[RMDB]
RNA sequence: GGGAACGACUCGAGUAGAGUCGAAAAGUCUGCGCUAAUAACUCCUGCGUUGUGGUCUUUUCCAUCGGGCACCUCAAAGUGGGGGUUAAGAAUGUCCUUACUUUACCAUGUUCCAGGAAAAACACCAGUGAUACUAAAAUUUCGAUUUUAGUAUCACAAAAGAAACAACAACAACAAC
Reactivity to DMS in 0.01 (KOAc 150mM, MgCl2 10mM, bicine 150mM(pH8.5), 24C), signal-to-noise 5, nucleotides 027 to 126: g010u000c020u000g000c090g010c030u000a150a130u000a030a050c030u000c000c010u000g000c030g010u000u000g020u000g000g010u000c050u010u000u010u010c060c090a090u010c170g010g000g000c270a040c010c030u000c040a000a030a020g020u000g010g000g000g000g000u000u000a020a030g010a100a090u010g010u010c040c000u000u000a020c020u000u000u000a130c170c070a080u000g000u000u000c010c020a140g000g000a050a050a060a060a070c120a070c130c140a100
Reactivity to 2A3 in 0.01 (KOAc 150mM, MgCl2 10mM, bicine 150mM(pH8.5), 24C), signal-to-noise 5, nucleotides 027 to 126: g020u000c020u050g040c030g000c080u050a070a060u020a050a140c010u010c010c010u020g010c010g020u000u020g010u020g000g020u010c020u050u150u080u040c070c040a110u110c080g000g010g040c060a010c000c020u030c020a020a020a000g010u020g000g010g010g000g000u020u010a010a000g060a040a070u080g080u090c000c000u020u020a020c000u050u040u030a100c040c030a060u110g030u040u000c010c010a020g080g010a030a070a080a040a020c040a030c200c010a020
Source information:
Chemical mapping of a 177-nucleotide RNA with DMS and 2A3. 2A3 adducts were read by reverse transcription with SuperScript II with manganese. Reactivities are given for positions 27 through 126. The 2A3 profile rests on 10,747 reads. DMS adducts were read by reverse transcription with MarathonRT.